[RMDB]
RNA sequence: GGGAACGACUCGAGUAGAGUCGAAAAUCAAAUAAUUCCACCGACUGCCCAUUCUGGGUUACCAGUUGCUCUGAUGAUGGCCCAAGUGGGAGUAAAGAGAAGAAGCCAGAUAGGAUCAACAAAAAAACAAUCGUAUUACCUUCGGGUAAUACGAUUGAAAAGAAACAACAACAACAAC
Reactivity to 2A3 in 0.01 (KOAc 150mM, MgCl2 10mM, bicine 150mM(pH8.5), 24C), signal-to-noise 1, nucleotides 027 to 126: u080c000a020a030a040u170a070a130u190u020c010c020a050c020c040g040a030c010u220g080c040c010c010a000u040u030c030u160g000g000g000u010u050a030c000c000a000g050u080u120g190c040u090c070u230g040a070u030g010a040u020g080g000c000c000c000a000a000g000u040g000g050g010a000g000u040a040a160a030g160a000g060a060a000g060a010a000g040c050c010a050g000a130u070a040g040g000a080u040c000a000a060c000a000a120a070a000a000a000a040
Reactivity to DMS in 0.01 (KOAc 150mM, MgCl2 10mM, bicine 150mM(pH8.5), 24C), signal-to-noise 1, nucleotides 027 to 126: u020c070a130a070a160u010a100a160u010u000c000c020a070c080c100g000a040c050u010g000c020c010c000a040u000u020c130u000g000g000g010u010u000a010c070c030a030g030u010u000g000c160u010c070u010g010a070u010g010a090u010g000g030c020c020c020a050a020g000u000g000g000g040a080g010u000a070a070a230g000a120g010a030a070g010a060a100g000c040c020a030g050a160u000a070g020g000a100u000c020a040a110c130a010a000a050a050a030a070a130
The record gives the reactivity of an RNA of 177 nucleotides to 2A3 and DMS. For DMS the reverse transcriptase was MarathonRT. The reactions ran in a buffer of 150 mM KOAc, 10 mM MgCl2 and 150 mM bicine (pH 8.5), at 24 C. It was measured as part of the RMDB library M2PK90.